[RMDB]
RNA sequence: GGGAACGACUCGAGUAGAGUCGAAAAGCUGAGAAAUUCGUUUCUCAGCACUGGAAAUAAAGCCGAAAGGCUAGCCAUUCCUUAUUUGGCGAAAGCCUGGCUUGAGCCUCCACUUCGGUGGAGGCAAACCCUAAAGCGAGUUCGCUCGCUUUAGGGUAAAAGAAACAACAACAACAAC
Reactivity to 2A3 in 0.01 (KOAc 150mM, MgCl2 10mM, bicine 150mM(pH8.5), 24C), signal-to-noise 1, nucleotides 027 to 126: g000c000u000g020a000g020a010a070a010u050u090c200g040u050u020u030c000u000c010a000g010c000a010c000u010g100g140a050a190a100u150a020a200a000g020c050c060g110a160a090a010g000g000c000u000a000g000c000c000a010u060u090c030c030u160u250a270u110u080u000g000g020c020g040a290a050a000g010c000c000u010g000g000c000u000u030g010a020g000c000c000u000c000c000a010c010u080u070c300g110g000u000g000g000a020g010g000c000a050a000
Reactivity to DMS in 0.01 (KOAc 150mM, MgCl2 10mM, bicine 150mM(pH8.5), 24C), signal-to-noise 1, nucleotides 027 to 126: g010c010u020g020a010g000a000a000a070u000u000c160g000u000u000u000c000u010c000a000g010c000a040c130u000g010g000a100a120a100u000a100a040a040g010c000c020g010a120a090a110g000g010c000u000a080g010c000c000a090u000u010c180c150u000u000a170u010u000u000g010g000c000g010a080a080a080g020c000c000u000g000g000c010u000u000g000a120g010c020c010u000c000c010a010c010u000u010c190g050g010u000g020g020a000g010g010c000a000a030